An RNA of 177 nucleotides, treated with DMS and 2A3 and read out base by base. The RNA was probed in 150 mM KOAc, 10 mM MgCl2 and 150 mM bicine (pH 8.5) at 24 C. For DMS, 774 sequencing reads were counted. Values cover nucleotides 27 to 126. For DMS the reverse transcriptase was MarathonRT. Source: RMDB library OK2TST, as collected in RNAgym. The 2A3 profile rests on 586 reads.
RNA sequence: GGGAACGACUCGAGUAGAGUCGAAAACUUUUACACCAAACUGUUCAACUAUAAUUUGACGAAUGUCAUCUGGAAGAUUGUCGUUUGAAAUAAUCAAGUUCAUCUCUGGUUUAAUGUCGACGAUAUAAUGUGCAUCUUUGUUCGCAAAGAUGCACAUAAAAGAAACAACAACAACAAC
Reactivity to DMS in 0.01 (KOAc 150mM, MgCl2 10mM, bicine 150mM(pH8.5), 24C), signal-to-noise 1, nucleotides 027 to 126: c050u000u000u000u000a110c190a090c070c000a020a090a100c090u020g000u020u000c070a060a090c100u000a110u000a130a100u000u000u000g020a050c010g000a070a070u020g010u020c040a050u000c130u020g020g010a110a110g010a060u010u000g020u000c060g050u000u000u000g010a060a080a100u000a070a000u000c020a020a010g010u000u000c120a040u000c030u000c110u000g000g010u000u000u030a050a090u000g000u000c020g000a030c040g000a030u000a040u000a070
Reactivity to 2A3 in 0.01 (KOAc 150mM, MgCl2 10mM, bicine 150mM(pH8.5), 24C), signal-to-noise 1, nucleotides 027 to 126: c000u000u040u090u290a010c030a000c030c070a020a050a040c040u080g060u230u120c030a130a000c100u060a030u090a300a110u030u030u080g010a000c020g110a210a080u270g030u000c010a060u010c010u020g000g070a030a040g070a170u130u230g000u010c000g050u010u060u110g010a030a030a000u060a010a000u020c020a050a050g010u040u100c030a150u020c050u040c050u060g000g190u020u070u110a060a050u170g080u050c000g000a010c000g000a000u020a010u000a150